[RMDB]
RNA sequence: GGGAACGACUCGAGUAGAGUCGAAAAUGGCUCGAAGACAGUGAUGGAGCUGAUUAUCCUCCUCUUGAUGUGUUAGGUGAAUUAUACAACCAGGGAGACCAAAUUAUUGCCAUGUACCUGGAGGACGUGUUAUGCUGACGUUCGCGUCAGCAUAACAAAAAGAAACAACAACAACAAC
Reactivity to DMS in 0.01 (KOAc 150mM, MgCl2 10mM, bicine 150mM(pH8.5), 24C), signal-to-noise 3, nucleotides 027 to 126: u000g000g020c000u010c030g000a050a160g000a100c080a080g010u000g020a110u010g020g010a100g010c070u000g000a130u010u010a150u000c040c040u000c120c000u000c050u010u010g010a190u040g030u000g010u030u010a070g020g010u020g020a050a050u080u000a130u000a090c300a070a110c000c000a010g000g000g030a150g020a150c080c060a020a090a080u040u010a050u000u000g010c010c010a060u030g000u020a160c020c000u000g050g010a140g010g010a110c220g010
Reactivity to 2A3 in 0.01 (KOAc 150mM, MgCl2 10mM, bicine 150mM(pH8.5), 24C), signal-to-noise 2, nucleotides 027 to 126: u100g000g000c020u000c060g030a100a040g050a100c090a010g000u030g120a010u200g000g070a020g050c090u060g000a060u000u090a070u050c000c000u000c000c000u000c030u080u040g150a150u170g130u000g000u080u080a030g110g000u000g000a040a030u240u050a110u050a130c070a080a010c000c040a040g000g050g000a040g000a000c000c000a030a080a100u210u200a060u010u000g000c010c050a090u100g000u000a010c000c000u000g040g000a110g010g090a070c070g030
Structure probing data (DMS and 2A3) for a 177-nucleotide construct.
The data come from the RNA Mapping Database (RMDB), library OK1LIB.